[RMDB]
RNA sequence: GGGAACGACUCGAGUAGAGUCGAAAAUGUUCCUCCCCCCGAGAGGGGAAGAGUGAGGCUUAUCCCGGGGAACUCGGCGAAUCGUCCCCGCAUGGCAGAGACCGAGCCCCCUUCGGAAAAGGACCGGUAAUCCUUCAGUUCGCUGAAGGAAAAAGAAACAACAACAACAAC
Reactivity to DMS in 0.01 (KOAc 150mM, MgCl2 10mM, bicine 150mM(pH8.5), 24C), signal-to-noise 9, nucleotides 027 to 129: u070g000u010u010c000c000u000c000c000c010c000c010c010g010a050g000a040g030g010g020g030a010a010g010a070g000u030g000a050g010g020c070u020u040a110u030c040c010c040g000g000g000g000a100a100c080u000c000g000g000c010g010a070a060u000c070g020u000c020c020c020c040g030c110a070u040g010g020c100a080g010a110g000a160c010c020g020a100g030c000c020c010c010c000u000u030c090g010g010a040a050a080a080g000g010a090c040c040g000g010u000a070a110
Reactivity to 2A3 in 0.01 (KOAc 150mM, MgCl2 10mM, bicine 150mM(pH8.5), 24C), signal-to-noise 8, nucleotides 027 to 129: u130g000u000u020c000c000u000c010c000c000c000c000c000g030a040g010a040g040g020g020g000a010a020g040a000g070u190g030a010g030g010c030u080u090a080u150c010c020c020g000g000g000g000a100a070c030u020c050g030g000c050g070a080a120u090c060g040u040c010c000c010c010g050c060a070u070g040g000c030a010g020a020g030a170c000c030g000a000g020c000c000c010c010c000u030u060c020g020g000a030a030a030a050g050g030a030c010c000g020g000u050a030a060
The data come from the RNA Mapping Database (RMDB), library 15KLIB. Structure probing data (DMS and 2A3) for a 170-nucleotide construct. For DMS the reverse transcriptase was MarathonRT. The DMS profile rests on 79,675 reads.